[RMDB]
RNA sequence: GGGAACGACUCGAGUAGAGUCGAAAACAGUAGGUUGGCAUUCUGUUCGGGUGGAAGCUCGGGUGAGAACUCGAGUGGACCGAGUGGAAAAGAAAAUCCUGGCCAUAGUAGCAGCGUUAGUCGGGUACAACUACCAGAACUUCGGUUCUGGUAGUUGAAAAGAAACAACAACAACAAC
Reactivity to DMS in 0.01 (KOAc 150mM, MgCl2 10mM, bicine 150mM(pH8.5), 24C), signal-to-noise 2, nucleotides 027 to 126: c090a100g010u010a090g000g010u000u000g010g020c090a210u010u000c010u000g020u000u020c010g020g000g040u020g010g000a150a220g000c000u000c000g010g020g010u000g000a220g030a090a020c000u010c000g000a060g030u010g000g000a060c000c000g020a010g020u000g000g000a010a050a120a110g020a090a030a070a060u020c040c000u000g000g000c010c040a020u010a110g010u000a060g010c070a050g010c060g010u010u020a060g000u020c020g000g010g000u000a120
Reactivity to 2A3 in 0.01 (KOAc 150mM, MgCl2 10mM, bicine 150mM(pH8.5), 24C), signal-to-noise 2, nucleotides 027 to 126: c010a030g130u110a070g010g080u060u010g060g000c120a160u000u000c060u000g040u030u000c010g020g040g020u300g190g000a010a000g040c010u020c000g010g000g030u000g000a040g000a030a000c000u010c000g000a000g000u030g000g010a000c000c000g000a000g050u040g020g030a030a010a110a020g190a000a030a000a000u090c000c000u010g000g000c000c020a040u060a050g070u090a010g050c140a020g000c060g050u090u160a000g000u070c010g050g000g000u080a010
This 177-nucleotide RNA was probed chemically with DMS and 2A3. Source: RMDB libraries RFM100 and RFMREP, as collected in RNAgym. For DMS the reverse transcriptase was MarathonRT. The RNA was probed in 150 mM KOAc, 10 mM MgCl2 and 150 mM bicine (pH 8.5) at 24 C.